The record gives the reactivity of an RNA of 207 nucleotides to 2A3 and DMS. High DMS reactivity at an A or C suggests that its Watson-Crick edge is free.
RNA sequence: GGGAACGACUCGAGUAGAGUCGAAAAUCCACUAUGAAUCUGGUCACUAAAUAAACACAAUUAGCUACUGUGUGUAAUAGUGAGUGUUGAUAACACAAAAUAAUAGUAUAGUUUUGGAAGAUUAUACGCGCCCUUGCUCCGUUCGCGGAGCAAGGAAGCUGACAAUUAUGUUCGCAUAAUUGUCAGCAAAAGAAACAACAACAACAAC
Reactivity to 2A3 in 0.01 (KOAc 150mM, MgCl2 10mM, bicine 150mM(pH8.5), 24C), signal-to-noise 7, nucleotides 027 to 156: u010c020c010a040c080u200a180u290g120a120a070u070c150u190g050g030u030c010a000c010u010a020a010a070u040a040a050a000c010a000c010a030a100u150u090a070g070c060u150a070c060u020g010u000g000u000g000u030a020a020u010a020g010u000g030a050g010u020g020u040u050g090a160u190a270a020c030a010c020a040a110a040a060u220a100a070u070a120g010u010a000u010a030g010u010u030u100u120g100g040a090a040g000a080u020u010a020u030a030c020g030c010g080c060c000c000u000u000g000c000u000c010c000g020u050u020c060g020c010g110g000a000g000c000a000a000g000g000a000a000
Reactivity to DMS in 0.01 (KOAc 150mM, MgCl2 10mM, bicine 150mM(pH8.5), 24C), signal-to-noise 3, nucleotides 027 to 156: u000c020c000a130c090u010a160u020g010a100a110u000c060u000g030g020u000c010a030c010u010a000a010a090u010a140a150a020c000a030c000a030a060u000u000a200g000c150u000a050c070u000g010u000g020u000g010u000a120a280u000a010g010u000g010a070g030u000g020u000u000g010a070u000a100a070c020a030c040a070a040a090a130u000a060a300u010a110g010u000a070u000a010g010u000u000u000u000g020g000a200a200g010a030u010u000a000u000a030c000g000c110g000c090c010c010u000u010g020c000u000c000c000g030u000u000c300g010c030g030g030a020g020c010a000a000g000g000a020a050
For DMS the reverse transcriptase was MarathonRT.
Values cover nucleotides 27 to 156.